The record gives the reactivity of an RNA of 177 nucleotides to 2A3 and DMS.
High 2A3 reactivity points to a flexible backbone, as in loops and unpaired stretches.
For 2A3, 1,274 sequencing reads were counted.
For 2A3 the reverse transcriptase was SuperScript II with manganese.
The data come from the RNA Mapping Database (RMDB), library OK1LIB.
[RMDB]
RNA sequence: GGGAACGACUCGAGUAGAGUCGAAAAGAAGAGCAGGCAGAUAAUCUUGUGCAGUAUGCAUGCUCGUAACUCCAGCGCACAAGUGGACGCACAAGAUUUUAAUCCAGCAUAGCGCAGGAGCCGCAGAGCUCACGUGCGAUUUCGAUCGCACGUGAGCAAAAGAAACAACAACAACAAC
Reactivity to 2A3 in 0.01 (KOAc 150mM, MgCl2 10mM, bicine 150mM(pH8.5), 24C), signal-to-noise 1, nucleotides 027 to 126: g100a000a000g020a020g000c010a010g000g060c000a000g000a090u120a020a040u070c000u000u000g000u000g000c070a030g030u110a040u070g020c000a000u000g010c000u030c020g000u040a060a000c000u000c000c020a040g050c000g040c030a010c010a130a210g050u030g010g020a070c140g020c000a000c000a000a000g000a000u020u020u050u010a030a050u060c010c000a000g000c000a020u020a140g000c000g000c000a010g010g010a010g040c000c000g130c130a020g040a000
Reactivity to DMS in 0.01 (KOAc 150mM, MgCl2 10mM, bicine 150mM(pH8.5), 24C), signal-to-noise 1, nucleotides 027 to 126: g100a060a010g020a000g040c000a040g000g010c010a110g000a070u000a130a070u000c000u000u010g010u000g060c030a290g010u110a100u000g030c000a050u000g020c050u000c000g000u020a020a300c050u000c020c020a050g010c070g000c070a100c250a070a170g000u040g000g000a040c250g000c000a040c000a000a000g000a010u000u000u060u000a020a230u000c000c100a020g000c100a070u020a040g070c000g060c040a110g000g020a000g020c090c000g030c100a040g000a160